[RMDB]
RNA sequence: GGGAACGACUCGAGUAGAGUCGAAAAGUAUCAUCAUUGUACGAUAUGGAAAGGAUCUUCGACGGCAUAGACCUUUCAAGGGUAAGCACAUCAAUGACCAUAAAUGCACCUGCUGCCGUUUUGACUGGUAUGCAUCCCGGUUCGCCGGGAUGCAUACAAAAGAAACAACAACAACAAC
Reactivity to 2A3 in 0.01 (KOAc 150mM, MgCl2 10mM, bicine 150mM(pH8.5), 24C), signal-to-noise 1, nucleotides 027 to 126: g050u010a000u090c020a000u000c030a020u090u140g060u060a070c070g020a050u020a020u210g140g000a030a000a000g050g120a260u010c000u030u000c080g090a080c010g000g000c010a010u020a040g030a020c000c020u000u010u020c030a040a010g070g000g000u080a090a020g080c050a020c010a140u100c040a040a090u120g070a020c050c000a050u070a150a290a020u040g020c040a010c050c020u030g020c060u030g000c040c010g080u010u000u100u000g040a040c000u020g000
Reactivity to DMS in 0.01 (KOAc 150mM, MgCl2 10mM, bicine 150mM(pH8.5), 24C), signal-to-noise 1, nucleotides 027 to 126: g020u000a060u010c040a150u000c060a100u010u000g010u010a020c100g020a100u010a070u000g010g000a040a030a040g000g010a090u000c030u000u000c130g020a090c060g010g030c070a050u040a070g000a050c010c000u000u010u000c060a110a090g010g020g020u000a080a080g010c030a050c080a090u030c080a030a080u000g000a040c120c100a120u020a030a080a110u000g010c070a090c040c060u000g020c180u000g030c010c020g000u000u010u020u000g000a080c130u010g000

Source: RMDB library OK2TST, as collected in RNAgym.
An RNA of 177 nucleotides, treated with 2A3 and DMS and read out base by base.
DMS adducts were read by reverse transcription with MarathonRT.
The 2A3 profile rests on 729 reads.
Reactivities are given for positions 27 through 126.
2A3 adducts were read by reverse transcription with SuperScript II with manganese.